The data come from the RNA Mapping Database (RMDB), library M2PK50. An RNA of 177 nucleotides, treated with DMS and 2A3 and read out base by base. The DMS profile rests on 23,403 reads.
RNA sequence: GGGAACGACUCGAGUAGAGUCGAAAAGGCGACAAGUUCGCUUGUCGCCACGGGGUCCAGCCUGGAAAGGCUGGAGGUAUUGGAAUGCUCGGGCCGCCAUUCAACGCGGGACAUUCGUGUCCCGCAAAACAUAGACUAAUUUCGAUUAGUCUAUGUUAAAAGAAACAACAACAACAAC
Reactivity to DMS in 0.01 (KOAc 150mM, MgCl2 10mM, bicine 150mM(pH8.5), 24C), signal-to-noise 8, nucleotides 027 to 126: g010g010c000g020a000c000a010a010g020u000u010c220g010c010u000u000g010u000c000g010c000c000a010c090g010g000g010g010u000c000c000a010g010c000c000u010g010g030a120a150a020g000g010c000u000g000g000a010g010g010u010a090u000u000g010g000a080a070u000g000c020u000c020g000g000g010c010c010g000c080c030a120u010u010c110a080a100c190g000c000g010g010g000a010c000a040u000u010c170g020u000g000u000c000c000c000g020c010a000a010
Reactivity to 2A3 in 0.01 (KOAc 150mM, MgCl2 10mM, bicine 150mM(pH8.5), 24C), signal-to-noise 8, nucleotides 027 to 126: g010g000c000g000a000c010a000a000g010u030u080c150g070c150u000u000g000u000c000g000c000c000a000c020g050g000g010g010u000c000c000a000g000c000c010u050g090g090a190a090a030g000g000c000u000g000g020a000g030g010u100a120u060u170g060g040a080a040u050g000c010u010c020g000g020g000c010c000g000c020c000a030u140u130c060a070a040c120g000c000g000g000g000a000c000a020u040u060c190g050u030g000u020c000c000c000g000c000a000a010
About this RNA: For 2A3, 27,991 sequencing reads were counted.